[RMDB]
RNA sequence: GGGAACGACUCGAGUAGAGUCGAAAAGCAACGCAGAGCCGCGGCAAGUGGAGUUAGCGAGAAGAGACUAGGCUUUGGUUUCUUCAAGUGAAGCGGUCACCAAUCAGGUGUGGUAGUUACCGUAAAAAUAACCGCUCUUUGUUCGCAAAGAGCGGAACCAUAAGUAGGAGUUCGCUCCUACUUAUGGAAAAGAAACAACAACAACAAC
Reactivity to 2A3 in 0.01 (KOAc 150mM, MgCl2 10mM, bicine 150mM(pH8.5), 24C), signal-to-noise 7, nucleotides 027 to 156: g020c020a050a030c060g010c040a030g000a030g100c040c040g020c020g040g040c070a080a070g050u060g050g070a100g020u140u130a030g030c040g020a050g010a060a000g010a000g000a000c020u040a050g100g120c080u130u120u130g020g000u000u020u000c000u020u000c030a040a030g030u030g050a080a010g010c010g000g020u020c010a010c030c020a020a130u190c050a050g070g000u050g020u050g120g020u040a060g030u050u090a030c010c020g030u080a040a050a010a030a010u140a080a080c000c000g010c000u000c000u000u000u010g030u040u080c140g000c120a000a000a000g000a000g010c000g000g000a000a020
Reactivity to DMS in 0.01 (KOAc 150mM, MgCl2 10mM, bicine 150mM(pH8.5), 24C), signal-to-noise 3, nucleotides 027 to 156: g020c010a040a090c030g010c020a070g000a170g020c060c010g000c040g030g030c030a060a100g000u000g000g020a130g010u000u000a220g010c040g000a300g010a060a040g010a110g020a020c010u000a090g020g000c140u000u000u010g020g020u000u000u000c040u000u000c030a060a300g010u000g010a120a180g010c010g010g010u000c030a060c020c020a060a090u000c080a110g010g020u000g030u000g010g030u010a070g010u000u000a060c020c020g010u000a000a070a030a080a140u010a120a150c000c000g010c000u000c000u000u000u000g010u000u010c230g040c010a010a020a000g000a030g020c000g010g000a000a020